[RMDB]
RNA sequence: GGGAACGACUCGAGUAGAGUCGAAAAGACAAUCCAGGGAACCGGAUGUCAUCACGUUGUUGCAGUACCAGAUGGCAUCUUAAAUCCGAUCUGCAAAUAAGCAUGCAGAAAGCUGAUGUGGGCUUUAAAAACGUGGUGCUGUUCGCAGCACCACGAACACAAACUCAUUGUUCGCAAUGAGUUUGUGAAAAGAAACAACAACAACAAC
Reactivity to 2A3 in 0.01 (KOAc 150mM, MgCl2 10mM, bicine 150mM(pH8.5), 24C), signal-to-noise 2, nucleotides 027 to 156: g040a020c040a040a050u070c030c030a090g040g010g010a090a070c060c030g000g000a010u010g040u010c020a010u040c040a010c170g030u040u030g030u050u080g050c130a070g050u160a120c080c000a040g000a000u000g010g000c000a000u000c000u000u030a030a030a000u020c000c010g010a090u050c000u010g000c000a000a050a150u190a190a070g070c080a030u020g000c010a000g000a040a090a000g030c070u060g020a080u080g140u100g110g000g000c040u120u100u160a060a120a010a030a000c010g000u010g020g010u000g000c020u000g020u030u040c200g010c050a000g010c000a000c010c000a000c000g000a000a000
Reactivity to DMS in 0.01 (KOAc 150mM, MgCl2 10mM, bicine 150mM(pH8.5), 24C), signal-to-noise 2, nucleotides 027 to 156: g050a130c040a050a110u000c020c040a210g020g060g000a060a090c140c140g010g020a010u000g000u000c000a020u000c000a280c170g030u000u000g000u000u000g000c010a130g010u000a080c070c040a110g000a030u000g010g040c000a020u000c000u010u010a040a060a130u000c020c010g000a230u000c020u000g010c000a030a030a150u000a100a200g020c120a160u000g000c000a030g010a030a060a070g000c090u000g020a120u010g000u000g000g000g000c020u000u010u000a020a060a090a100a090c020g050u000g000g050u000g020c000u000g010u020u000c240g050c030a030g000c000a020c010c010a000c000g020a020a090